Annotation: Structure probing data (DMS and 2A3) for a 207-nucleotide construct. The RNA was probed in 150 mM KOAc, 10 mM MgCl2 and 150 mM bicine (pH 8.5) at 24 C.

RNA sequence: GGGAACGACUCGAGUAGAGUCGAAAACCAUGAGACCGUAACUUUCGUAGUCAUUGCUAAAGGGGCAGGUCUCGCUCUUUUGUCAUUGCGGUUGCCUAGAGGCAUGGUCGUUUACCGCGACUUUCCAAUACGAAGAGGGCCUUCGGGCCCUCUUCAACCAUCAUCUAAUGUUCGCAUUAGAUGAUGGAAAAGAAACAACAACAACAAC
Reactivity to DMS in 0.01 (KOAc 150mM, MgCl2 10mM, bicine 150mM(pH8.5), 24C), signal-to-noise 1, nucleotides 027 to 156: c040c010a130u020g020a090g000a030c000c000g020u020a200a140c050u000u000u000c110g030u000a050g010u050c190a130u000u000g020c030u000a020a040a070g010g020g010g060c140a130g000g020u000c010u000c030g020c100u000c020u030u000u000u000g010u000c030a180u000u000g020c000g010g030u010u000g000c060c090u000a080g000a140g000g000c050a060u000g000g010u000c020g030u000u000u000a140c180c150g000c020g000a020c050u010u010u000c000c010a070a200u000a110c130g010a040a030g000a050g020g010g050c010c000u010u010c300g050g080g040c000c010c010u000c000u000u000c000a010a110
Reactivity to 2A3 in 0.01 (KOAc 150mM, MgCl2 10mM, bicine 150mM(pH8.5), 24C), signal-to-noise 2, nucleotides 027 to 156: c010c010a110u100g020a000g000a010c010c010g040u030a000a050c020u000u040u030c040g020u000a020g140u140c100a190u160u080g000c020u080a000a000a030g060g010g040g000c080a090g020g020u000c000u000c000g020c010u070c010u010u110u060u090g040u060c050a060u020u160g030c050g010g000u070u010g050c010c020u110a130g050a150g090g020c020a030u110g040g000u020c040g020u010u100u090a110c040c040g000c030g010a010c000u010u060u030c040c000a040a060u100a090c040g010a000a000g000a000g010g000g000c000c000u030u060c060g000g000g000c000c000c000u000c000u010u000c000a000a000
The DMS profile rests on 2,917 reads. The 2A3 profile rests on 1,069 reads. The data come from the RNA Mapping Database (RMDB), library M2RFPK.